RNA sequence: GGGAACGACUCGAGUAGAGUCGAAAAUGUGGCAGUGUGGUUUGUAAAUUCAGCAAUCCACCGGUAGCGUAAUGAAUCGUGAAGACCCCCGUUGAUAAGGAAUAAGGGCAGGUCACGUUGCUAUUGGCGGUCAAUAGUAUUUCGAUACUAUUGACCGAAAAGAAACAACAACAACAAC
Reactivity to DMS in 0.01 (KOAc 150mM, MgCl2 10mM, bicine 150mM(pH8.5), 24C), signal-to-noise 7, nucleotides 027 to 126: u020g020u000g010g010c080a070g020u020g020u000g000g010u010u010u000g020u010a050a060a140u020u010c130a120g010c040a030a030u010c020c010a060c020c020g020g000u010a030g010c020g010u000a050a050u010g010a120a080u010c020g000u010g010a070a070g010a180c030c020c000c010c020g010u010u010g000a140u030a110a120g010g010a090a050u010a110a130g010g000g010c050a080g000g010u000c020a010c040g000u000u000g000c010u000a070u000u000g000g020
Reactivity to 2A3 in 0.01 (KOAc 150mM, MgCl2 10mM, bicine 150mM(pH8.5), 24C), signal-to-noise 6, nucleotides 027 to 126: u180g020u080g060g010c050a040g050u020g010u010g160g080u010u030u020g060u060a080a140a190u210u120c070a030g020c000a000a020u020c010c010a010c020c000g020g000u020a010g000c010g030u060a030a060u120g130a070a090u080c010g030u040g030a040a030g140a180c000c000c000c000c000g040u060u090g130a160u160a190a080g090g030a070a050u200a120a080g010g010g000c030a020g170g000u010c010a000c020g000u020u020g000c000u000a010u060u050g060g000

Structure probing data (DMS and 2A3) for a 177-nucleotide construct. The reactions ran in a buffer of 150 mM KOAc, 10 mM MgCl2 and 150 mM bicine (pH 8.5), at 24 C. For DMS the reverse transcriptase was MarathonRT. For 2A3 the reverse transcriptase was SuperScript II with manganese. Reactivities are given for positions 27 through 126.